The record gives the reactivity of an RNA of 177 nucleotides to DMS and 2A3. For DMS the reverse transcriptase was MarathonRT. Conditions: 150 mM KOAc, 10 mM MgCl2 and 150 mM bicine (pH 8.5), 24 C. 2A3 adducts were read by reverse transcription with SuperScript II with manganese.
RNA sequence: GGGAACGACUCGAGUAGAGUCGAAAAUGGAACUGCGAACGGCUCAGUAGAACGGUGAUUAUUUAAUCGUGUAGGAAGGAUAACCGCGGGAAACUGUGGCUAAUAACACGAGUAAGACGCCGACCCACGUAAGAAUAGACUUCGGUCUAUUCUUACGAAAAGAAACAACAACAACAAC
Reactivity to DMS in 0.01 (KOAc 150mM, MgCl2 10mM, bicine 150mM(pH8.5), 24C), signal-to-noise 3, nucleotides 027 to 126: u020g010g020a100a060c040u010g000c050g020a080a070c090g000g000c030u000c030a050g010u010a080g010a090a160c030g000g000u000g010a150u000u010a100u000u010u000a040a050u000c020g000u010g040u000a090g010g000a150a040g000g010a170u000a050a100c010c000g030c010g000g010g010a120a080a130c010u000g010u000g010g000c020u010a040a100u010a040a030c030a010c000g000a050g000u000a020a040g010a040c040g000c010c010g010a180c020c000c000a140
Reactivity to 2A3 in 0.01 (KOAc 150mM, MgCl2 10mM, bicine 150mM(pH8.5), 24C), signal-to-noise 3, nucleotides 027 to 126: u090g030g010a040a020c040u030g000c040g050a180a060c060g130g000c010u000c070a070g020u070a030g050a120a020c010g000g030u030g060a190u040u140a090u060u110u070a080a050u010c010g000u000g010u020a050g050g120a140a020g050g040a030u070a120a030c000c000g000c000g030g000g020a000a050a000c000u010g000u000g020g000c020u010a010a070u060a090a020c000a000c000g000a000g010u010a030a010g040a020c010g000c000c000g030a030c030c000c010a020